[RMDB]
RNA sequence: GGGAACGACUCGAGUAGAGUCGAAAAGUCAACGACAAUGUAGAGUUCUAUGCGCGCAACAGCGUUCCAUUUGUGGUCGGCACAACCGGUGGCGACAGGGAGAAGCUGCUGGCCGAUGCGCAGUCCGACGAAAGCGAAGGUUCGCCUUCGCUUUCGUAAAAGAAACAACAACAACAAC
Reactivity to DMS in 0.01 (KOAc 150mM, MgCl2 10mM, bicine 150mM(pH8.5), 24C), signal-to-noise 2, nucleotides 027 to 126: g000u000c120a030a080c060g020a010c040a130a110u010g040u010a090g000a150g010u000u000c070u000a100u010g020c050g000c020g010c080a030a050c060a020g010c010g000u010u010c010c020a180u000u020u010g030u030g010g000u000c020g010g020c020a030c020a140a090c190c170g010g020u000g000g000c010g000a030c030a060g000g010g030a040g010a050a130g010c040u000g010c040u000g010g020c180c120g010a090u010g030c000g010c020a040g000u000c030c020g000
Reactivity to 2A3 in 0.01 (KOAc 150mM, MgCl2 10mM, bicine 150mM(pH8.5), 24C), signal-to-noise 2, nucleotides 027 to 126: g060u050c050a060a000c070g060a000c030a090a080u080g000u080a050g020a040g070u080u040c060u060a090u130g000c010g000c010g030c040a020a050c010a080g010c000g050u070u000c010c000a160u070u090u260g230u140g110g000u030c000g050g020c000a020c020a150a240c140c090g100g000u010g020g010c030g020a040c020a020g040g090g030a160g010a090a000g010c030u050g000c000u030g060g080c070c080g060a080u070g000c030g070c000a010g060u090c000c060g030